[RMDB]
The data come from the RNA Mapping Database (RMDB), library OK3TST. The record gives the reactivity of an RNA of 207 nucleotides to 2A3 and DMS. DMS adducts were read by reverse transcription with MarathonRT. 2A3 adducts were read by reverse transcription with SuperScript II with manganese. DMS (dimethyl sulfate) methylates the pairing face of unpaired adenines and cytosines.
RNA sequence: GGGAACGACUCGAGUAGAGUCGAAAAGAGUGAAGAAGGUGACAGACAAGAGGACAGAGACUAUGAAACCAAGUGUGCAGGGCCUCACAGGCAACAUUAGGGAUCCCCGACAUUCUACUAGGGACACCAGGAAGUCCUUUCAGGUUGAAGCAGGGGGCACAUAUGCUAGUUUCGACUAGCAUAUGUGAAAAGAAACAACAACAACAAC
Reactivity to 2A3 in 0.01 (KOAc 150mM, MgCl2 10mM, bicine 150mM(pH8.5), 24C), signal-to-noise 6, nucleotides 027 to 156: g040a010g030u100g020a030a030g020a030a010g060g030u050g020a030c020a040g050a020c030a050a060g010a020g040g000a010c010a030g040a010g010a030c040u090a070u240g090a080a020a020c030c030a080a040g030u040g020u040g080c030a060g030g050g000c020c010u030c010a060c030a020g030g000c030a040a020c010a110u080u140a040g020g020g040a060u060c010c010c000c010g020a020c010a030u040u030c020u060a060c020u050a030g030g000g000a000c010a040c030c020a030g090g070a080a030g030u010c000c000u040u060u100c070a050g010g010u020u050g020a020a000g000c060a050g010g000g010g020g010
Reactivity to DMS in 0.01 (KOAc 150mM, MgCl2 10mM, bicine 150mM(pH8.5), 24C), signal-to-noise 4, nucleotides 027 to 156: g010a130g040u000g010a080a060g000a100a030g020g010u000g020a120c050a080g020a100c050a070a110g000a070g010g010a110c040a100g010a120g010a060c080u010a090u020g010a080a060a090c050c020a040a120g020u000g020u010g030c050a070g010g020g010c030c030u000c050a080c090a050g010g000c020a040a050c060a080u000u000a080g000g010g010a100u010c020c010c010c020g000a100c080a100u010u010c040u000a090c070u000a080g000g010g010a050c030a100c040c060a090g000g020a050a090g000u000c010c010u000u000u000c080a060g000g020u000u010g010a070a120g020c010a120g010g000g010g010g030